[RMDB]
RNA sequence: GGGAACGACUCGAGUAGAGUCGAAAACCUGGUUUAGGGUUCCAGGCUAGCCCUAUCUAUCGGUCGAGAUGCGAGCGCUUAACCUCAAAUUGAGUGGCUGAGUUAGUGGUGAACGUAUCCCUAUGUUAAAACGGUAGCUGCUUCGGCAGCUACCGAACAAUCCAACAUACUUCGGUAUGUUGGAUUGAAAAGAAACAACAACAACAAC
Reactivity to 2A3 in 0.01 (KOAc 150mM, MgCl2 10mM, bicine 150mM(pH8.5), 24C), signal-to-noise 3, nucleotides 027 to 156: c010c000u000g010g030u040u060u080a070g000g000g010u070u040c010c020a030g040g000c030u030a010g000c000c010c000u010a040u000c020u020a110u090c020g020g010u020c040g040a020g000a100u010g030c010g040a010g010c060g020c180u220u210a160a140c020c000u010c010a030a030a060u050u050g020a050g070u180g050g000c010u010g020a010g020u010u020a080g000u140g140g000u010g020a070a020c030g020u070a070u100c010c010c000u030a060u090g070u040u130a080a090a020a020c010g000g010u000a000g000c000u010g000c020u060u070c220g070g000c000a000g000c000u000a000c000c010g000a000a000
Reactivity to DMS in 0.01 (KOAc 150mM, MgCl2 10mM, bicine 150mM(pH8.5), 24C), signal-to-noise 2, nucleotides 027 to 156: c000c020u000g010g070u000u000u000a060g010g020g020u020u000c030c040a060g060g020c000u010a300g000c010c010c010u000a060u000c040u000a080u000c020g030g040u000c000g000a200g040a100u000g000c300g010a120g030c060g000c060u000u010a080a090c060c010u020c020a060a210a130u020u000g010a240g020u010g000g010c010u000g010a020g020u000u000a070g020u000g020g020u000g010a100a040c090g060u000a120u000c000c000c000u000a070u000g020u010u000a030a080a160a180c000g040g000u010a020g030c000u000g000c000u000u010c300g060g010c020a000g040c000u000a000c000c000g000a000a070

Chemical mapping of a 207-nucleotide RNA with 2A3 and DMS. It was measured as part of the RMDB library M2RFPK. For DMS, 2,588 sequencing reads were counted. Values cover nucleotides 27 to 156.